[RMDB]
RNA sequence: GGGAACGACUCGAGUAGAGUCGAAAAGAUAUGGACAUCGGACAGAGCCACUCGGAAACGAGAAUGGCGACGAAGUCCAUGUCCUAAGUCAAACUGUCGGCCGAUACUUCGGUAUCGGCCGACAGAACAUACACAGAUACUUCGGUAUCUGUGUAUGAAAAGAAACAACAACAACAAC
Reactivity to 2A3 in 0.01 (KOAc 150mM, MgCl2 10mM, bicine 150mM(pH8.5), 24C), signal-to-noise 1, nucleotides 027 to 126: g020a040u050a050u100g000g000a010c010a030u020c280g000g020a000c040a050g030a000g000c010c000a020c000u000c000g030g020a080a080a020c030g000a020g090a300a300u090g030g010c010g030a080c030g040a060a020g010u040c000c020a000u000g000u000c000c000u050a140a030g090u060c040a110a070a130c020u000g020u000c010g010g030c000c000g000a010u060a020c020u080u170c280g090g000u020a000u040c020g000g020c040c000g050a000c030a000g000a020a000
Reactivity to DMS in 0.01 (KOAc 150mM, MgCl2 10mM, bicine 150mM(pH8.5), 24C), signal-to-noise 2, nucleotides 027 to 126: g000a040u000a300u010g010g000a030c010a010u000c140g020g010a030c030a040g020a240g000c000c000a060c000u000c010g000g000a060a070a290c010g020a000g010a110a110u020g020g030c000g010a110c150g000a080a080g000u000c010c010a010u010g000u000c000c010u000a030a090g000u000c030a060a080a250c010u000g010u000c000g040g000c000c000g000a020u000a010c010u000u010c180g030g020u000a000u000c000g000g000c040c000g000a000c010a010g010a020a110